Source: RMDB library RNAMAK, as collected in RNAgym. An RNA of 207 nucleotides, treated with 2A3 and read out base by base. For 2A3 the reverse transcriptase was SuperScript II with manganese. Values cover nucleotides 27 to 156. The reactions ran in a buffer of 150 mM KOAc, 10 mM MgCl2 and 150 mM bicine (pH 8.5), at 24 C.
[RMDB]
RNA sequence: GGGAACGACUCGAGUAGAGUCGAAAAGGGGUCAUCCCAUCGAUCAGAGAUUGACGACGAUCGUACACUGAAGCCUCCACGGUGUACGGGAGUCAACCUCUGGGAGGGAUGACGGAGGCACCCAAAAGAAAUCCGGUCCUUCGGGACCGGAUUUCAAGAUAAGUCGUAACUUCGGUUACGACUUAUCAAAAGAAACAACAACAACAAC
Reactivity to 2A3 in 0.01 (KOAc 150mM, MgCl2 10mM, bicine 150mM(pH8.5), 24C), signal-to-noise 1, nucleotides 027 to 156: g050g020g040g000u020c000a000u010c000c000c000a110u300c010g000a010u000c000a010g000a000g000a020u000u020g000a000c030g030a040c010g000a000u000c000g010u000a000c000a000c000u030g040a100a010g000c000c000u010c000c000a010c010g000g000u000g000u000a000c000g000g010g000a000g020u010c000a000a010c000c000u010c000u000g010g000g000a010g010g000g000a000u010g010a010c000g010g000a000g000g000c010a020c000c010c000a040a080a020a080g010a000a000a000u010c000c000g000g020u000c010c020u110u190c300g040g000g000a000c000c000g000g000a000u000u000u000c000a000a000